[RMDB]
Chemical mapping of a 177-nucleotide RNA with 2A3 and DMS. The RNA was probed in 150 mM KOAc, 10 mM MgCl2 and 150 mM bicine (pH 8.5) at 24 C.
RNA sequence: GGGAACGACUCGAGUAGAGUCGAAAAGAAGAUGGGCGUGAUGAAAAUCAUGCGAAAGCUGUCUGAAGGGCUUUGGAGGAAAUAAAUAAAGGCAGCGGAACUCUUAGGCCGAAAUCCAUCGAAGAAAGGGUAUAAGUUACUUCGGUAACUUAUACCCAAAAGAAACAACAACAACAAC
Reactivity to 2A3 in 0.01 (KOAc 150mM, MgCl2 10mM, bicine 150mM(pH8.5), 24C), signal-to-noise 3, nucleotides 027 to 126: g130a000a010g010a020u010g030g020g000c000g010u000g010a000u010g040a020a050a000a000u040c000a000u010g000c010g040a030a000a000g000c000u000g030u010c020u000g040a190a110g070g000g000c010u020u080u060g040g020a010g060g100a090a060a120u230a040a090a010u090a020a060a040g000g000c000a000g020c030g000g070a090a100c000u000c000u020u040a030g000g010c000c000g010a020a040a020u000c010c000a040u050c030g000a020a000g050a040a090a030
Reactivity to DMS in 0.01 (KOAc 150mM, MgCl2 10mM, bicine 150mM(pH8.5), 24C), signal-to-noise 3, nucleotides 027 to 126: g020a120a150g000a010u000g000g000g020c010g020u010g000a010u000g000a060a050a190a040u000c000a000u000g010c000g000a060a030a100g000c020u000g000u000c010u000g000a090a070g020g000g010c030u010u010u000g000g000a020g010g050a110a130a070u040a060a080a080u040a050a100a140g000g000c000a020g000c000g000g000a090a040c030u010c040u000u000a040g010g000c000c000g000a050a060a180u020c010c010a010u000c020g000a130a160g020a110a060a100

For 2A3 the reverse transcriptase was SuperScript II with manganese.